[RMDB]
RNA sequence: GGGAACGACUCGAGUAGAGUCGAAAAGAUUAGGUGUCCGUGAGGAAUCGAAACGAGGCACGAGAUUCCAAGGUCUCUGUAUUACGCCGUCUCGUGACGUCUCUCUAGUCACAUUCGGCAUAACAAACGUAUGUAGUAGGUUCGCCUACUACAUACGAAAAGAAACAACAACAACAAC
Reactivity to DMS in 0.01 (KOAc 150mM, MgCl2 10mM, bicine 150mM(pH8.5), 24C), signal-to-noise 5, nucleotides 027 to 126: g000a070u020u020a120g000g000u000g000u000c000c010g000u000g000a200g020g010a130a070u030c090g010a080a120a050c040g000a130g010g010c020a020c030g000a170g000a040u020u000c020c020a110a100g000g000u010c010u000c030u020g020u010a170u020u000a030c120g020c010c000g000u000c020u000c150g000u000g000a020c000g010u020c110u030c180u020c140u040a080g000u000c000a010c000a040u000u000c000g000g010c000a040u010a000a020c150a070a080a150
Reactivity to 2A3 in 0.01 (KOAc 150mM, MgCl2 10mM, bicine 150mM(pH8.5), 24C), signal-to-noise 5, nucleotides 027 to 126: g040a020u080u140a060g040g030u020g010u010c010c010g010u030g020a080g070g090a070a110u160c040g040a060a060a030c040g020a090g030g020c020a010c040g030a040g000a020u060u020c030c010a020a030g100g010u010c020u010c040u070g070u060a090u070u040a030c070g000c000c000g000u000c020u050c080g000u000g000a000c020g090u040c010u000c000u000c040u080a000g000u000c000a000c000a000u000u000c010g000g000c000a000u030a010a020c030a020a080a010